RNA sequence: GGGAACGACUCGAGUAGAGUCGAAAAGAUAUGGAUUAUCGAGUCACAGUCGGAAACGACUGUAUGACGAUGAGAUACUGUCCUAAGUCAAAACCCUCCUUUCCUUGUUCGCAAGGAAAGGAGGGAAGUACACUUCGGUCUUCGGACCGAAGUGUACAAAAGAAACAACAACAACAAC
Reactivity to DMS in 0.01 (KOAc 150mM, MgCl2 10mM, bicine 150mM(pH8.5), 24C), signal-to-noise 1, nucleotides 027 to 126: g010a040u000a300u020g000g010a060u010u000a010u000c010g000a300g000u030c000a050c000a010g000u030c000g030g000a100a080a150c030g000a000c000u000g010u000a040u000g030a020c040g000a100u000g000a180g000a010u010a000c300u000g030u020c020c000u000a010a050g000u020c020a130a040a120a160c000c000c000u010c000c000u000u000u000c010c000u000u000g000u010u030c250g010c010a000a000g000g000a000a010a010g000g000a010g000g000g000a000a010
Reactivity to 2A3 in 0.01 (KOAc 150mM, MgCl2 10mM, bicine 150mM(pH8.5), 24C), signal-to-noise 1, nucleotides 027 to 126: g020a020u140a080u220g000g000a000u090u000a030u150c030g010a020g000u000c000a000c010a030g000u000c020g000g020a050a120a060c020g000a000c000u000g050u070a120u130g050a030c000g010a070u160g110a060g000a020u090a060c100u160g060u000c030c020u100a190a040g060u030c060a000a050a170a300c000c030c020u000c020c030u020u010u000c000c000u000u040g000u040u080c200g040c140a000a000g000g000a000a010a000g000g000a000g000g000g010a000a000